An RNA of 207 nucleotides, treated with DMS and 2A3 and read out base by base. 2A3 adducts were read by reverse transcription with SuperScript II with manganese. The reactions ran in a buffer of 150 mM KOAc, 10 mM MgCl2 and 150 mM bicine (pH 8.5), at 24 C. The DMS profile rests on 1,578 reads. Reactivities are given for positions 27 through 156.
RNA sequence: GGGAACGACUCGAGUAGAGUCGAAAAUGGUCAACUAAGUUGAAGCGUCCGCAUGUAGGAUCGCCACAAGGGAUUGUCUCAAUCCUUUGGGUUCAAAAGUAGAGACUCGGCUAAUCCAUCCUGACUGUCGGAUCGGUGCAGACUAAAAUUAAAGACAGUCUAUUCUCAGGUUCGCCUGAGAAUAGACAAAAGAAACAACAACAACAAC
Reactivity to DMS in 0.01 (KOAc 150mM, MgCl2 10mM, bicine 150mM(pH8.5), 24C), signal-to-noise 1, nucleotides 027 to 156: u000g030g000u000c060a080a080c020u000a010a030g020u000u020g000a130a230g070c070g000u000c020c120g020c110a090u000g020u010a140g010g000a000u020c090g070c040c010a040c000a020a030g000g020g000a070u000u000g020u000c070u000c020a050a010u020c000c000u030u010u000g000g000g050u010u020c090a020a070a130a110g030u000a120g010a300g000a030c040u000c030g070g000c010u000a070a080u000c020c040a110u000c010c020u020g000a090c140u010g030u000c000g060g000a080u010c020g000g020u000g000c030a080g000a150c040u010a070a110a030a110u000u000a040a030a100g010a180c050a070
Reactivity to 2A3 in 0.01 (KOAc 150mM, MgCl2 10mM, bicine 150mM(pH8.5), 24C), signal-to-noise 4, nucleotides 027 to 156: u100g020g010u040c020a060a020c090u110a140a130g090u050u030g080a110a030g060c030g050u030c020c000g030c140a070u190g050u120a030g010g000a030u070c040g000c000c020a120c010a050a010g000g000g000a010u010u070g180u110c070u040c110a000a020u000c000c000u000u000u020g040g000g000u070u040c060a100a090a040a000g040u070a050g030a020g010a060c020u010c100g020g000c010u030a020a030u010c010c000a010u020c010c000u030g030a040c000u010g020u080c000g030g000a030u050c030g030g010u050g000c030a000g010a020c040u100a100a040a090a040u160u110a070a030a020g050a030c000a010